[RMDB]
RNA sequence: GGGAACGACUCGAGUAGAGUCGAAAAAUCUGGCCGGCCACCACAUCGUUGGGAACUUCAUGAAUAUCCUUGACUCCCAACGUGUUCUGUACGGUAACCGCCGUGACUGCGACGCACGCGUGCACUCGUACUCCCUUCACUUCGGUGAAGGGAGUACAAAAGAAACAACAACAACAAC
Reactivity to DMS in 0.01 (KOAc 150mM, MgCl2 10mM, bicine 150mM(pH8.5), 24C), signal-to-noise 1, nucleotides 027 to 126: a000u210c050u000g000g000c000c000g010g000c010c080a110c080c210a030c100a030u000c020g050u010u000g000g070g000a000a030c070u020u000c030a000u000g000a170a140u050a260u040c140c070u010u000g000a030c300u000c000c000c010a020a000c010g000u000g000u050u010c100u020g000u040a030c010g000g000u030a050a150c130c200g000c010c020g010u000g030a120c030u000g000c060g000a130c100g000c000a010c140g000c010g000u000g010c040a010c070u000c100
Reactivity to 2A3 in 0.01 (KOAc 150mM, MgCl2 10mM, bicine 150mM(pH8.5), 24C), signal-to-noise 4, nucleotides 027 to 126: a000u050c050u020g070g010c040c030g000g010c020c030a010c040c000a030c010a060u160c070g000u010u010g010g000g010a020a050c070u170u030c030a040u050g160a300a120u290a160u300c030c050u000u030g010a000c070u020c000c000c010a010a010c010g000u010g030u040u050c030u050g040u020a010c020g000g020u070a090a150c030c020g050c020c000g000u020g070a050c030u030g030c050g040a030c070g010c040a000c000g010c030g020u060g020c020a010c040u070c040